[RMDB]
Source: RMDB library OK3TST, as collected in RNAgym. This 207-nucleotide RNA was probed chemically with DMS and 2A3. For 2A3, 22,126 sequencing reads were counted.

RNA sequence: GGGAACGACUCGAGUAGAGUCGAAAACUUGCACUGUAGGUGCAAUGUCUGUAGGUAAGCAGACAUUACCUAGGAUAUAUCAUCCAGGAUUAUGAAGGGUCCUUAGCUGAUAGCGUCUCUUCCUUCAUCUUUAAGCAGCGAUAAAAGCUGAAGGAGACAGGUAAUAUCAUUUCGAUGAUAUUACCUGAAAAGAAACAACAACAACAAC
Reactivity to DMS in 0.01 (KOAc 150mM, MgCl2 10mM, bicine 150mM(pH8.5), 24C), signal-to-noise 5, nucleotides 027 to 156: c050u010u000g020c020a050c030u000g030u000a100g020g020u010g020c030a040a020u000g020u000c010u010g030u000a090g030g020u000a100a220g000c030a150g010a080c060a070u000u000a040c010c010u010a090g020g020a080u000a120u000a090u000c080a050u010c020c040a090g010g010a090u000u000a060u010g030a120a120g000g030g000u000c000c020u000u000a060g020c060u010g010a090u000a080g030c060g010u000c020u000c040u010u000c000c010u010u000c010a040u000c020u000u000u000a070a140g010c030a160g000c130g010a220u000a080a040a030a070g010c050u000g010a020a030g010g010a090g010a230
Reactivity to 2A3 in 0.01 (KOAc 150mM, MgCl2 10mM, bicine 150mM(pH8.5), 24C), signal-to-noise 9, nucleotides 027 to 156: c020u030u090g020c030a020c040u090g080u260a060g050g030u050g030c050a020a010u020g010u000c010u010g080u050a100g110g240u150a150a040g020c010a010g010a020c010a010u010u070a060c010c010u030a070g000g020a010u050a010u030a040u190c080a010u010c020c020a000g030g000a040u040u060a040u150g040a040a040g020g000g010u000c020c000u050u070a040g020c050u050g060a090u070a040g060c040g050u010c010u000c000u080u060c000c000u000u010c000a020u010c010u020u120u030a110a030g040c030a010g000c020g070a060u110a260a140a010a010g000c010u000g000a010a010g020g000a010g000a010
Reactivities are given for positions 27 through 156. 2A3 is a SHAPE reagent: it acylates the 2'-hydroxyl of flexible nucleotides of all four kinds.